[RMDB]
RNA sequence: GGGAACGACUCGAGUAGAGUCGAAAAGAUAUGGAGACUCUCCCCACCUUCUAAGGGCGUUGAAAUCGGAAACGAUGGAGCCUAUGAAGAGGAGUCUCCUAAGUCAAAACGCCGCUUCGGCGGCGAACCAUGAUAAACAGUUCGCUGUUUAUCAUGGAAAAGAAACAACAACAACAAC
Reactivity to DMS in 0.01 (KOAc 150mM, MgCl2 10mM, bicine 150mM(pH8.5), 24C), signal-to-noise 3, nucleotides 027 to 126: g000a060u020a180u000g010g000a030g000a050c010u020c010u000c080c020c010c050a300c090c010u000u000c000u000a130a140g010g000g040c010g000u010u010g000a060a080a010u010c020g000g000a070a060a140c020g030a020u000g000g000a120g020c000c010u020a300u000g010a010a000g000a150g010g010a020g010u000c010u000c010c000u000a030a040g000u000c090a070a050a100a150c020g000c010c000g010c010u000u010c170g030g010c000g000g020c000g000a040a080
Reactivity to 2A3 in 0.01 (KOAc 150mM, MgCl2 10mM, bicine 150mM(pH8.5), 24C), signal-to-noise 3, nucleotides 027 to 126: g030a050u260a100u300g010g000a000g000a000c010u050c030u130c090c020c010c010a020c010c000u020u030c010u030a080a300g020g010g000c040g180u300u050g040a030a040a000u000c010g020g060a060a030a020c000g010a000u020g030g020a020g030c000c000u030a080u090g000a000a000g000a010g020g000a000g000u000c000u010c000c010u010a030a010g050u020c060a020a060a160a200c020g010c000c000g020c040u070u090c270g170g000c030g000g020c000g000a010a020
Chemical mapping of a 177-nucleotide RNA with DMS and 2A3. For 2A3 the reverse transcriptase was SuperScript II with manganese. The data come from the RNA Mapping Database (RMDB), library TTRDEL. The reactions ran in a buffer of 150 mM KOAc, 10 mM MgCl2 and 150 mM bicine (pH 8.5), at 24 C.